RNA sequence: GGGAACGACUCGAGUAGAGUCGAAAAAGAUAGAAAAGCUGGGUAAGACUCACCUGGCGACUCGUCGUCGACGAAGGGUCCUCAGCAGAGCACCGGCAGGAGGCGCUAUGCAGGAACGCUAGGGGUCCCGUAUGCGGGAAUUCGUUCCCGCAUACGGAAAAGAAACAACAACAACAAC
Reactivity to DMS in 0.01 (KOAc 150mM, MgCl2 10mM, bicine 150mM(pH8.5), 24C), signal-to-noise 1, nucleotides 027 to 126: a150g000a090u070a070g000a110a070a150a200g010c040u020g000g000g020u020a030a110g000a140c160u000c160a050c210c000u010g020g000c110g040a110c150u030c050g020u000c040g040u010c050g020a030c010g010a110a100g000g020g000u000c000c000u000c020a050g020c060a060g000a100g000c010a090c000c050g020g080c070a050g020g000a090g000g000c090g020c030u000a070u090g000c100a000g010g010a030a210c090g000c000u000a110g000g000g000g020u020c020
Reactivity to 2A3 in 0.01 (KOAc 150mM, MgCl2 10mM, bicine 150mM(pH8.5), 24C), signal-to-noise 1, nucleotides 027 to 126: a000g070a040u180a060g170a060a100a020a010g000c020u080g020g030g030u170a070a110g020a040c010u080c080a070c000c020u020g030g000c000g000a010c000u020c020g060u030c010g090u080c050g040a100c050g010a120a090g010g000g000u030c000c000u070c050a010g000c060a040g040a020g000c000a080c050c000g060g000c000a040g070g090a050g020g080c080g000c090u020a040u060g000c030a010g040g040a090a050c000g000c100u060a040g050g000g000g000u050c000